[RMDB]
RNA sequence: GGGAACGACUCGAGUAGAGUCGAAAAUACUGAAGCUUUCCGUACUGACAAACUGGAACUGACCAGCGGCAACAUCGCUGACCAUAACGGUAACGUAGUAUCUGGUGUGUUCGAUAUCCAUAGCAGCGCGCCAUAUGUAAUUCGUUACAUAUGGCGCAAAAGAAACAACAACAACAAC
Reactivity to DMS in 0.01 (KOAc 150mM, MgCl2 10mM, bicine 150mM(pH8.5), 24C), signal-to-noise 3, nucleotides 027 to 126: u000a100c060u010g020a070a070g010c070u000u010u000c020c040g010u010a040c080u010g000a050c090a030a210a060c030u000g000g010a050a090c200u010g010a080c080c000a030g010c040g030g030c100a090a120c200a090u010c050g000c020u000g020a090c020c010a030u010a070a050c130g000g000u000a040a110c110g010u010a020g020u010a050u000c070u000g010g000u020g030u000g000u000u000c050g000a070u010a060u000c060c040a060u000a120g010c100a090g040c210
Reactivity to 2A3 in 0.01 (KOAc 150mM, MgCl2 10mM, bicine 150mM(pH8.5), 24C), signal-to-noise 2, nucleotides 027 to 126: u120a000c040u050g080a050a000g050c020u040u110u000c030c000g020u030a040c030u050g110a060c010a030a150a010c040u010g020g010a080a040c020u030g030a050c010c020a000g010c010g000g000c030a100a020c030a090u110c010g000c020u010g020a050c000c040a060u060a150a010c090g010g000u010a070a010c050g030u030a010g040u020a140u130c060u040g030g000u050g000u020g020u050u040c020g010a040u000a020u080c030c030a040u040a100g120c020a010g020c000